The record gives the reactivity of an RNA of 177 nucleotides to 2A3 and DMS. For DMS, 29,443 sequencing reads were counted. DMS adducts were read by reverse transcription with MarathonRT.
RNA sequence: GGGAACGACUCGAGUAGAGUCGAAAACGUCGUGAACUAGCGACAAUGCAUUAGGUCCAUCGUUAUCUAACCGAAACAUCGUGACUAGUGUUAGAAUAGAACCAGGAGAGGCCGCUGGCAAACAAAGACGGAGUGUAGUAUUCGUACUACGCUCCGUAAAAGAAACAACAACAACAAC
Reactivity to 2A3 in 0.01 (KOAc 150mM, MgCl2 10mM, bicine 150mM(pH8.5), 24C), signal-to-noise 9, nucleotides 027 to 126: c050g000u010c010g020u030g090a150a080c070u040a060g010c000g020a020c010a020a040u090g010c020a020u020u100a050g070g080u010c030c010a060u040c060g030u030u070a130u070c040u030a020a090c030c020g060a030a030a030c040a050u130c090g080u120g070a040c030u040a040g020u010g000u070u040a020g020a060a060u070a050g050a040a010c010c010a000g000g040a090g010a030g030g020c000c000g000c020u010g010g000c010a030a050a030c030a020a110a010g090
Reactivity to DMS in 0.01 (KOAc 150mM, MgCl2 10mM, bicine 150mM(pH8.5), 24C), signal-to-noise 9, nucleotides 027 to 126: c150g000u000c050g010u010g000a110a090c080u030a090g000c030g010a040c050a090a090u020g000c050a060u020u010a050g020g020u010c020c030a080u020c140g000u020u020a070u010c040u010a060a050c100c070g000a100a070a070c070a070u020c130g010u020g010a080c040u010a050g000u020g000u000u010a040g010a060a120u020a070g000a080a090c050c040a040g000g000a090g010a120g010g010c020c020g020c050u010g000g010c080a040a070a060c110a060a080a100g010